[RMDB]
RNA sequence: GGGAACGACUCGAGUAGAGUCGAAAAAUCCGCGAGGUGAACGUCGGCAGCGGCCGCAACGUGCAGCCGUACCCGCGGAUGUUCGCGAUGGCCGCGCCCGCGAUGGACAGUGCGAAGAUGAGCGCGAGGCGAUUAAUAAUUUCGAUUAUUAAUCGCCAAAAGAAACAACAACAACAAC
Reactivity to DMS in 0.01 (KOAc 150mM, MgCl2 10mM, bicine 150mM(pH8.5), 24C), signal-to-noise 9, nucleotides 027 to 126: a070u000c020c000g020c070g010a120g020g020u000g010a100a090c060g010u000c300g010g010c030a160g040c030g000g020c010c010g020c130a120a050c080g000u000g010c030a040g010c010c010g010u010a080c120c090c090g000c010g000g000a020u000g000u000u000c020g010c040g000a190u010g010g010c020c010g010c020g010c020c020c040g010c040g000a080u010g000g000a090c080a090g000u000g010c040g010a070a090g010a110u000g000a090g010c050g020c070g000a170
Reactivity to 2A3 in 0.01 (KOAc 150mM, MgCl2 10mM, bicine 150mM(pH8.5), 24C), signal-to-noise 6, nucleotides 027 to 126: a000u030c020c000g010c030g030a110g020g080u080g050a120a020c020g030u030c020g090g000c020a120g030c060g030g000c010c000g000c040a070a050c060g040u050g010c030a010g020c010c000g020u060a110c010c000c030g000c000g020g000a020u020g020u020u040c020g000c020g040a080u110g060g010c110c010g000c010g000c000c010c000g010c010g020a050u090g050g040a030c040a060g060u050g080c020g030a050a030g080a140u180g040a040g050c040g000c030g020a040

Chemical mapping of a 177-nucleotide RNA with DMS and 2A3. In probing experiments dimethyl sulfate is read out at A N1 and C N3, which are open when not base-paired. The DMS profile rests on 19,031 reads.